This 207-nucleotide RNA was probed chemically with DMS and 2A3. The data come from the RNA Mapping Database (RMDB), library RNAMAK. The DMS profile rests on 2,688 reads. Reactivities are rounded to 0.1 and cut off at 0 and 3. The reactions ran in a buffer of 150 mM KOAc, 10 mM MgCl2 and 150 mM bicine (pH 8.5), at 24 C.
RNA sequence: GGGAACGACUCGAGUAGAGUCGAAAAGGGGUCAAGUAUAGACAGCCCAUCUCUAGCGUGUACGAAGAACACAGCUGAAGCCUCCACGGCUGUGGGAGUAUCGGGUGGGCCGAACUUGACGGAGGCACCCAAAUACGUGGUGUUCGCACCACGUAAAUACUUAUGACCGAUUCGUCGGUCAUAAGUAAAAAGAAACAACAACAACAAC
Reactivity to DMS in 0.01 (KOAc 150mM, MgCl2 10mM, bicine 150mM(pH8.5), 24C), signal-to-noise 1, nucleotides 027 to 156: g000g030g010g010u000c000a050a090g020u000a160u000a090g010a140c110a060g000c000c000c020a040u000c030u000c050u000a150g050c190g020u000g000u010a050c020g020a180a110g010a180a180c000a010c010a000g080c000u000g000a020a220g000c020c010u000c020c010a270c000g010g010c020u000g030u000g000g000g020a220g020u010a040u000c060g020g050g020u010g000g000g080c000c030g000a040a090c040u000u010g020a050c030g010g000a050g010g040c010a100c000c000c010a100a150a200u000a010c010g040u010g020g040u000g000u000u010c300g040c020a060c000c010a010c000g010u000a000a040a120
Reactivity to 2A3 in 0.01 (KOAc 150mM, MgCl2 10mM, bicine 150mM(pH8.5), 24C), signal-to-noise 5, nucleotides 027 to 156: g060g010g050g020u020c000a010a000g030u040a180u120a240g110a060c060a020g000c000c000c000a010u000c090u040c100u130a090g100c080g120u240g030u120a030c050g120a300a010g000a020a000c010a000c000a010g010c000u030g010a080a000g020c000c000u000c000c000a030c010g000g000c000u000g010u000g000g000g000a000g000u020a020u080c060g020g000g000u000g010g000g000c000c020g010a030a010c000u010u010g010a030c040g000g000a000g010g010c000a040c000c000c000a030a110a020u090a010c000g000u000g000g000u000g050u050u100c270g020c100a000c000c000a000c010g000u010a010a000a010